[RMDB]
RNA sequence: GGGAACGACUCGAGUAGAGUCGAAAAGUAAAGUGUCGUCUUCCACACUUCAUUGAAGGCUGUCAAAAAAUUUUCAAUUUACCAAAUUAGUCCGGCAGAUGUGUGGGCUCGAAUACGGAAGGAUCCCAGGACACCGGACGAAAAGUUCUGCCGAUUACCACGGAUACUGAUUCGUCAGUAUCCGUGGAAAAGAAACAACAACAACAAC
Reactivity to 2A3 in 0.01 (KOAc 150mM, MgCl2 10mM, bicine 150mM(pH8.5), 24C), signal-to-noise 2, nucleotides 027 to 156: g020u030a000a200a070g000u010g030u000c020g010u020c050u030u010c030c000a020c010a000c030u120u150c050a160u070u150g010a070a040g030g010c050u030g040u140c060a000a070a000a050a100a170u130u120u060u240c030a070a050u070u110u250a160c020c040a050a000a050u110u020a100g020u030c040c000g010g020c070a050g050a230u050g050u000g000u030g010g020g030c000u010c050g020a150a060u140a080c050g030g110a000a050g120g010a060u000c000c000c000a010g110g000a000c020a000c040c000g000g030a000c000g000a040a040a000a000g020u140u000c000u100g030c000c050g070a070u030u020a070